The record gives the reactivity of an RNA of 177 nucleotides to 2A3 and DMS. Conditions: 150 mM KOAc, 10 mM MgCl2 and 150 mM bicine (pH 8.5), 24 C. The data come from the RNA Mapping Database (RMDB), libraries RFM100 and RFMREP. 2A3 adducts were read by reverse transcription with SuperScript II with manganese. For DMS the reverse transcriptase was MarathonRT.
RNA sequence: GGGAACGACUCGAGUAGAGUCGAAAACGGGCGCAAGUGAAAUACCACUACUUUUAACGUUAUUUUACUUAUUCCGUGGGUCGGAAGCGGGGCAUCGCCCCUCCUUUUGGCUCUAAGGCCCGGCCUUGCAUCAAGAAGCAUUCGUGCUUCUUGAUGCAAAAGAAACAACAACAACAAC
Reactivity to 2A3 in 0.01 (KOAc 150mM, MgCl2 10mM, bicine 150mM(pH8.5), 24C), signal-to-noise 3, nucleotides 027 to 126: c010g010g000g000c070g020c110a020a000g010u010g040a000a010a000u030a020c020c080a030c080u190a110c080u180u200u110u220a170a020c090g010u020u000a000u000u000u010u020a010c000u040u020a060u200u080c060c050g050u080g000g000g000u010c000g010g020a000a000g000c020g000g010g000g000c030a150u160c180g060c000c000c000c000u050c000c010u000u000u010u000g000g000c000u000c020u020a080a060g110g000c000c000c000g010g020c000c010u010u020
Reactivity to DMS in 0.01 (KOAc 150mM, MgCl2 10mM, bicine 150mM(pH8.5), 24C), signal-to-noise 2, nucleotides 027 to 126: c020g020g020g020c050g000c130a050a000g000u010g000a010a000a000u000a000c030c040a130c170u050a180c200u000u020u030u010a020a150c160g010u030u000a000u000u000u000u000a010c000u000u000a160u020u030c180c060g000u000g000g000g000u000c000g020g000a010a000g050c300g000g000g030g050c000a080u070c230g070c040c010c000c000u020c120c000u020u000u000u040g000g000c000u010c000u070a000a050g000g010c000c060c010g000g000c070c000u000u000